Structure probing data (2A3) for a 207-nucleotide construct.
2A3 is a SHAPE reagent: it acylates the 2'-hydroxyl of flexible nucleotides of all four kinds.
The reactions ran in a buffer of 150 mM KOAc, 10 mM MgCl2 and 150 mM bicine (pH 8.5), at 24 C.
The 2A3 profile rests on 522 reads.
RNA sequence: GGGAACGACUCGAGUAGAGUCGAAAAUCAAGCAAAACCCCAAAACCUUACACUGAGAGCAUUUAGCCUGAUUACUCUUUAAAUCAAAUCAGGCAAUAGAGAGAAACUCGAGACGUGAAAACCCCACAUAACGAUCUAGGCUUCGGCCUAGAUCGAACUAGACCUUGUACUUCGGUACAAGGUCUAGAAAAGAAACAACAACAACAAC
Reactivity to 2A3 in 0.01 (KOAc 150mM, MgCl2 10mM, bicine 150mM(pH8.5), 24C), signal-to-noise 1, nucleotides 027 to 156: u010c010a000a040g060c010a020a000a170a240c000c060c030c000a000a240a140a200c080c090u120u080a010c060a060c050u100g010a000g000a000g000c020a040u030u000u060a030g000c000c000u000g000a000u000u020a040c020u020c000u210u230u150a100a030a020u130c060a010a010a010u000c000a050g000g040c000a000a000u010a000g050a000g040a000g080a120a040a040c010u000c010g000a000g000a000c030g010u010g110a010a010a010a050c000c020c060c000a060c020a070u180a040a010c010g000a000u000c010u010a000g010g000c010u080u110c260g020g000c000c000u000a010g000a000u000c000g000a000a000